Conditions: 150 mM KOAc, 10 mM MgCl2 and 150 mM bicine (pH 8.5), 24 C. An RNA of 177 nucleotides, treated with DMS and 2A3 and read out base by base. Source: RMDB library M2PK50, as collected in RNAgym.

RNA sequence: GGGAACGACUCGAGUAGAGUCGAAAAGAAGGCACUUUCGAGUGCCUUCAUGGGGAGCUCAGGUCUCCCUCCGUUGCAAACUCCCUAAGGGAGGAGACCUAAUUAGGUGCACUUUCGAGUGCACCAAUCAAGUUAUGCUAUUCGUAGCAUAACUUGAAAAAGAAACAACAACAACAAC
Reactivity to DMS in 0.01 (KOAc 150mM, MgCl2 10mM, bicine 150mM(pH8.5), 24C), signal-to-noise 8, nucleotides 027 to 126: g010a020a010g010g010c000a010c000u000u010u010c170g010a020g030u000g000c000c000u000u000c000a040u010g010g000g000g020a200g010c170u000c150a030g010g010u000c000u000c030c010c010u000c000c010g020u010u000g020c180a080a100a150c160u000c010c010c000u010a110a100g000g010g010a040g010g010a010g000a010c000c000u000a080a100u010u010a080g010g010u000g000c000a010c000u000u000u010c170g010a010g010u000g000c000a010c000c000a030a050
Reactivity to 2A3 in 0.01 (KOAc 150mM, MgCl2 10mM, bicine 150mM(pH8.5), 24C), signal-to-noise 7, nucleotides 027 to 126: g010a000a000g010g010c030a000c030u050u070u170c260g100a000g000u000g000c000c000u000u000c000a000u010g000g010g000g010a050g030c070u070c220a020g040g010u000c000u010c040c010c010u000c010c010g120u040u120g110c090a090a060a180c060u050c020c000c010u060a080a110g070g010g000a010g000g000a000g010a000c000c000u010a040a110u140u170a070g000g000u000g000c000a000c010u060u090u110c240g070a010g000u010g000c000a000c000c000a000a000